[RMDB]
RNA sequence: GGGAACGACUCGAGUAGAGUCGAAAAGAUAUGGAAGUGUCAUAUACUACGAAGAACGAGCUCGGAAACGAGCUCGGGAGUAGGUAUGAGCACUUCCUAAGUCAAACGGACACGUUCGCGUGUCCGACAGCAAUCUUAUGUUCGCAUAAGAUUGCUGAAAAGAAACAACAACAACAAC
Reactivity to 2A3 in 0.01 (KOAc 150mM, MgCl2 10mM, bicine 150mM(pH8.5), 24C), signal-to-noise 3, nucleotides 027 to 126: g020a010u090a050u130g000g010a010a010g010u000g000u050c010a000u100a070u140a300c020u000a040c030g300a300a080g000a070a000c010g000a000g020c000u000c000g000g000a080a100a090c010g040a000g000c000u000c000g000g010g000a010g000u000a000g000g000u000a010u010g060a120g050c000a000c000u000u000c000c010u000a080a010g040u030c050a110a050a090c020g000g000a000c010a000c010g050u100u120c300g010c010g150u020g010u000c010c000g000a030
Reactivity to DMS in 0.01 (KOAc 150mM, MgCl2 10mM, bicine 150mM(pH8.5), 24C), signal-to-noise 4, nucleotides 027 to 126: g000a050u000a300u000g000g010a020a000g040u000g020u000c010a020u000a020u000a190c010u000a010c010g000a130a220g000a130a190c010g010a020g010c000u000c000g030g000a070a140a300c010g030a010g000c010u000c000g000g000g000a030g020u000a000g000g020u000a010u000g010a130g020c010a010c000u000u000c000c000u000a020a070g000u000c030a120a140a300c030g000g000a030c000a010c020g010u010u000c210g020c000g010u000g000u000c000c000g010a090